This 207-nucleotide RNA was probed chemically with DMS and 2A3. The reactions ran in a buffer of 150 mM KOAc, 10 mM MgCl2 and 150 mM bicine (pH 8.5), at 24 C.
RNA sequence: GGGAACGACUCGAGUAGAGUCGAAAAGAACACGUCUCGGGACGACGCUAAACUCGCCCUGGUCGGGAUGGGUUUAACGACCCCUCGGGUUUCCUAGUUCCUAAAACUAGGUGGAGGAGUCAUAUAAAAAACUUCUACACGUUCGCGUGUAGAAGAACUAUGUUGGGAAGUUCGCUUCCCAACAUAGAAAAGAAACAACAACAACAAC
Reactivity to DMS in 0.01 (KOAc 150mM, MgCl2 10mM, bicine 150mM(pH8.5), 24C), signal-to-noise 1, nucleotides 027 to 156: g010a120a100c030a120c010g000u000c030u010c000g030g000g010a030c030g020a070c000g000c070u010a060a070a120c190u000c000g020c010c000c000u000g050g040u000c070g000g000g000a090u000g020g010g010u000u000u020a080a140c040g000a080c020c000c020c040u030c130g010g010g020u000u000u000c010c000u010a050g000u000u000c030c090u000a090a050a040a040c000u000a010g000g040u000g000g010a050g000g000a090g000u000c050a110u000a080u010a000a120a050a110a070a110c000u000u000c000u000a000c000a020c000g010u000u010c270g010c000g040u000g000u000a000g010a000a030g010a040a070
Reactivity to 2A3 in 0.01 (KOAc 150mM, MgCl2 10mM, bicine 150mM(pH8.5), 24C), signal-to-noise 2, nucleotides 027 to 156: g050a090a010c030a020c100g010u000c000u010c000g030g050g000a110c300g020a030c040g050c230u010a000a000a000c000u020c010g060c020c010c000u070g100g030u050c020g000g030g020a040u090g060g040g020u030u060u110a100a020c030g030a010c010c020c000c000u000c000g020g010g000u010u050u020c000c010u000a010g000u000u040c000c050u100a040a040a000a000c000u010a030g030g000u050g020g030a080g030g020a020g060u110c040a040u140a020u300a130a110a020a010a000a040c000u000u000c000u000a000c000a010c010g030u050u060c250g020c000g050u000g000u000a000g000a000a000g000a000a000